RNA sequence: GGGAACGACUCGAGUAGAGUCGAAAACAACAUAGGUGACCGCAAAUCCGCAAGGACUCGUACGGUCACUGAAUCCUGCCCAGUGCAGGUAUCUGAACACCUCGUACAAGAGGACGAAGGACCUGUCAACGGCGGGGGUAACUAUGACCCUCUUAAGGUAAUACCAAGUGUUCGCACUUGGUAUUACAAAAGAAACAACAACAACAAC
Reactivity to 2A3 in 0.01 (KOAc 150mM, MgCl2 10mM, bicine 150mM(pH8.5), 24C), signal-to-noise 4, nucleotides 027 to 156: c040a030a030c020a040u060a050g000g050u000g000a000c000c000g010c050a050a070a020u010c020c000g080c070a050a070g010g000a020c040u060c110g150u230a090c010g000g000u000c000a000c000u000g000a000a020u040c000c010u020g030c000c000c030a080g000u030g030c000a000g090g010u010a200u040c000u020g020a060a020c020a030c040c000u020c020g070u240a180c060a250a080g000a000g010g060a040c040g050a040a000g000g010a000c000c000u010g010u040c050a070a000c020g000g000c010g020g000g000g000g000u050a040a030c050u050a050u140g060a060c020c000c000u020c000u050u060a150a060g130
Reactivity to DMS in 0.01 (KOAc 150mM, MgCl2 10mM, bicine 150mM(pH8.5), 24C), signal-to-noise 2, nucleotides 027 to 156: c020a110a090c050a100u010a190g000g040u000g020a040c000c000g000c010a040a130a080u010c010c010g000c300a140a270g010g000a010c030u000c070g020u000a040c000g020g030u010c010a000c000u000g010a110a100u020c000c010u000g000c050c010c090a110g010u000g010c000a010g000g000u000a020u010c000u020g010a220a120c110a170c000c000u020c030g040u000a120c170a120a180g010a030g010g020a160c050g000a300a210g000g010a070c000c010u000g000u020c020a150a060c080g000g020c050g040g020g020g010g000u000a030a120c030u010a080u020g010a200c020c000c000u010c020u010u000a060a150g010
Structure probing data (2A3 and DMS) for a 207-nucleotide construct. Conditions: 150 mM KOAc, 10 mM MgCl2 and 150 mM bicine (pH 8.5), 24 C.